Annotation
Chemical mapping of a 177-nucleotide RNA with DMS and 2A3. Reactivities are given for positions 27 through 126. The RNA was probed in 150 mM KOAc, 10 mM MgCl2 and 150 mM bicine (pH 8.5) at 24 C. Reactivities are rounded to 0.1 and cut off at 0 and 3. 2A3 adducts were read by reverse transcription with SuperScript II with manganese.
RNA sequence: GGGAACGACUCGAGUAGAGUCGAAAAGCGGAGAUGUUCGCAUCUCCGCAAAUCCCUGGAUGCAGCGAGUUAAAACGGAUACGUUGGCAAGUAUCCAUCGCUAAAGUAUUAGCUUCGGCUAAUACAAGUGAGAGGUAGGGUUCGCCCUACCUCUCACAAAAGAAACAACAACAACAAC
Reactivity to DMS in 0.01 (KOAc 150mM, MgCl2 10mM, bicine 150mM(pH8.5), 24C), signal-to-noise 1, nucleotides 027 to 126: g080c000g000g000a000g000a020u000g050u000u030c130g000c000a010u000c000u000c000c090g000c000a010a060a080u000c000c010c000u000g020g010a130u000g010c110a020g030c020g000a050g000u010u020a100a080a080a140c190g000g000a070u000a000c020g010u000u000g000g000c260a080a110g000u000a010u010c000c000a060u010c040g000c010u000a040a090a260g000u000a000u010u000a000g010c000u000u010c170g010g000c000u000a010a000u000a010c000a060a140
Reactivity to 2A3 in 0.01 (KOAc 150mM, MgCl2 10mM, bicine 150mM(pH8.5), 24C), signal-to-noise 1, nucleotides 027 to 126: g020c000g030g000a000g000a010u010g020u090u100c210g020c060a000u000c000u010c000c000g050c020a010a000a000u000c010c000c000u020g140g010a040u200g010c040a000g030c000g050a060g050u120u300a050a100a050a080c140g000g000a020u030a020c040g020u040u120g210g000c090a150a040g040u030a000u060c000c000a040u020c000g010c000u070a050a080a080g010u000a000u020u010a000g020c020u010u040c170g050g040c000u000a000a000u000a010c010a040a020